[RMDB]
RNA sequence: GGGAACGACUCGAGUAGAGUCGAAAAACUUUGUCAAACUCCGAACUUGCUAGAAUCGAAGAUACCAGGUGCUAGGGCGUAGGGAUAAGCUUUACGCCCGUGACGGAAACAACCGAGACUAAUGUUAUGAGAUUCAGGGAUUCGUCCCUGAAUCUCAAAAAGAAACAACAACAACAAC
Reactivity to DMS in 0.01 (KOAc 150mM, MgCl2 10mM, bicine 150mM(pH8.5), 24C), signal-to-noise 1, nucleotides 027 to 126: a090c120u010u040u040g000u000c070a040a030a040c130u000c020c030g000a140a030c070u000u000g000c160u030a160g060a020a260u000c050g000a210a170g000a040u000a000c020c010a000g000g000u000g000c070u030a080g000g000g000c000g020u030a000g000g020g000a300u020a090a080g000c000u000u000u000a000c000g000c000c000c000g180u010g000a000c050g000g000a040a070a060c090a050a110c150c000g000a070g000a150c070u000a070a110u000g000u020u000a160
Reactivity to 2A3 in 0.01 (KOAc 150mM, MgCl2 10mM, bicine 150mM(pH8.5), 24C), signal-to-noise 1, nucleotides 027 to 126: a000c000u080u040u240g000u140c020a120a020a110c010u040c010c010g040a040a040c010u000u090g000c000u080a140g060a130a060u000c020g000a030a010g000a000u030a180c010c000a010g010g080u020g080c000u120a160g030g000g000c000g000u000a000g090g060g000a020u070a190a050g060c000u050u030u000a000c010g000c000c030c000g000u000g000a000c020g040g060a220a000a000c000a000a020c070c000g060a060g000a000c010u090a290a000u180g040u160u110a130

This 177-nucleotide RNA was probed chemically with DMS and 2A3. For 2A3 the reverse transcriptase was SuperScript II with manganese. It was measured as part of the RMDB library RFM100.